[RMDB]
The data come from the RNA Mapping Database (RMDB), library 15KLIB. The record gives the reactivity of an RNA of 170 nucleotides to DMS and 2A3. The RNA was probed in 150 mM KOAc, 10 mM MgCl2 and 150 mM bicine (pH 8.5) at 24 C.

RNA sequence: GGGAACGACUCGAGUAGAGUCGAAAACUUUCCGAGUAUUCCUUUGAUGUUUCCCAGCCAGGGAUUUUCGACCUCAAGUUUCUUGAUCUUCUUCUUUGUCUUCCGGAGCUCCGCCUCGAGUUCCUCCAUCGACAGGUCUUCGGACCUGUCAAAAGAAACAACAACAACAAC
Reactivity to DMS in 0.01 (KOAc 150mM, MgCl2 10mM, bicine 150mM(pH8.5), 24C), signal-to-noise 1, nucleotides 027 to 129: c110u000u000u000c030c030g000a080g080u030a150u000u000c010c020u010u010u010g000a100u030g020u000u000u000c000c020c000a200g030c090c050a050g000g000g000a130u060u000u010u020c050g020a050c000c000u030c060a050a050g000u000u000u040c020u040u000g000a120u030c020u020u010c040u000u000c050u000u000u000g020u040c060u030u010c070c070g030g030a230g020c050u020c030c000g020c070c060u020c000g030a010g030u000u000c120c000u000c030c020a050u060c080
Reactivity to 2A3 in 0.01 (KOAc 150mM, MgCl2 10mM, bicine 150mM(pH8.5), 24C), signal-to-noise 6, nucleotides 027 to 129: c020u050u040u000c020c020g000a020g020u030a070u020u060c000c000u060u060u100g080a090u060g060u020u050u020c010c010c010a010g060c040c020a030g010g030g030a030u060u010u020u050c030g030a040c010c010u030c040a110a070g020u020u030u010c020u050u040g040a140u020c030u030u010c000u070u020c000u020u100u090g060u030c010u050u020c020c010g020g010a030g020c010u020c010c000g050c000c000u010c020g020a030g000u010u010c000c000u000c020c010a100u110c050
For DMS the reverse transcriptase was MarathonRT.